About this RNA:
Chemical mapping of a 177-nucleotide RNA with 2A3 and DMS.
[RMDB]
RNA sequence: GGGAACGACUCGAGUAGAGUCGAAAACAAUGAACGUCUAGUGAGGGCAUUGCUGCUGACACCAAAGAUAUUACCCCCGCUCACUGGUCGCCUGCGAUCAGGGUUCGGAAUUUUUGGACCAAGGCCCACGCACUGGGAUAUUCGUAUCCCAGUGCGUAAAAGAAACAACAACAACAAC
Reactivity to 2A3 in 0.01 (KOAc 150mM, MgCl2 10mM, bicine 150mM(pH8.5), 24C), signal-to-noise 3, nucleotides 027 to 126: c070a040a060u110g020a110a020c020g030u020c030u060a030g080u030g110a090g040g030g000c040a040u000u160g040c020u090g010c040u040g030a000c020a020c030c020a010a040a010g060a030u030a110u120u230a160c000c010c010c000c010g010c010u010c000a050c000u000g030g000u000c000g030c020c070u270g100c010g010a000u020c000a000g000g000g030u000u030c000g020g060a030a040u070u000u000u000u010g040g000a050c030c000a070a060g090g000c010c000c000
Reactivity to DMS in 0.01 (KOAc 150mM, MgCl2 10mM, bicine 150mM(pH8.5), 24C), signal-to-noise 2, nucleotides 027 to 126: c110a140a060u050g010a110a020c100g030u000c050u000a110g000u000g010a070g010g000g000c060a050u000u010g000c060u000g010c020u000g000a110c040a100c010c010a020a050a020g000a030u010a100u020u040a200c180c050c060c030c020g000c040u020c020a040c000u010g010g030u000c000g000c090c070u040g000c030g000a000u000c030a060g000g000g000u000u020c010g000g000a010a040u030u000u000u050u000g000g010a080c080c090a030a100g050g000c000c050c000
The RNA was probed in 150 mM KOAc, 10 mM MgCl2 and 150 mM bicine (pH 8.5) at 24 C. Source: RMDB libraries RFM100 and RFMREP, as collected in RNAgym. 2A3 adducts were read by reverse transcription with SuperScript II with manganese.